This 177-nucleotide RNA was probed chemically with 2A3 and DMS. For 2A3 the reverse transcriptase was SuperScript II with manganese.
[RMDB]
RNA sequence: GGGAACGACUCGAGUAGAGUCGAAAAGAAAUUUCGUCAAGUUUGUAAACUGGUUAGGCAAGUGUUGUAUUUUCUGUGUCUAAGCACUGGUGAUUCUGUUCACUAGUGCAUACAUUGAUAUUUAAGUCCUAUUUACAGUGUUCGCACUGUAAAUAGGAAAAGAAACAACAACAACAAC
Reactivity to 2A3 in 0.01 (KOAc 150mM, MgCl2 10mM, bicine 150mM(pH8.5), 24C), signal-to-noise 2, nucleotides 027 to 126: g020a000a100a010u080u060u030c030g030u020c020a060a010g010u020u130u110g080u120a000a100a130c030u020g000g090u040u050a040g020g000c040a050a130g030u020g030u060u100g030u040a070u060u190u020u010c020u000g040u000g000u000c030u080a120a020g000c000a000c000u000g000g010u010g010a040u190u070c070u250g200u070u000c000a000c000u000a000g010u000g000c000a000u000a000c000a000u000u140g020a000u040a060u040u180u080a080a020g070u050
Reactivity to DMS in 0.01 (KOAc 150mM, MgCl2 10mM, bicine 150mM(pH8.5), 24C), signal-to-noise 1, nucleotides 027 to 126: g010a100a100a080u000u000u000c100g030u010c060a050a040g010u000u010u010g010u010a050a120a090c040u000g020g020u010u010a060g020g000c060a080a070g000u000g000u000u010g000u000a090u000u010u000u000c020u000g010u010g000u000c110u010a040a140g000c000a000c010u010g020g010u000g000a030u000u000c300u000g010u010u000c000a010c010u000a010g000u000g000c000a030u000a030c040a040u000u000g010a050u000a050u010u000u000a080a140g010u000
For DMS, 1,244 sequencing reads were counted.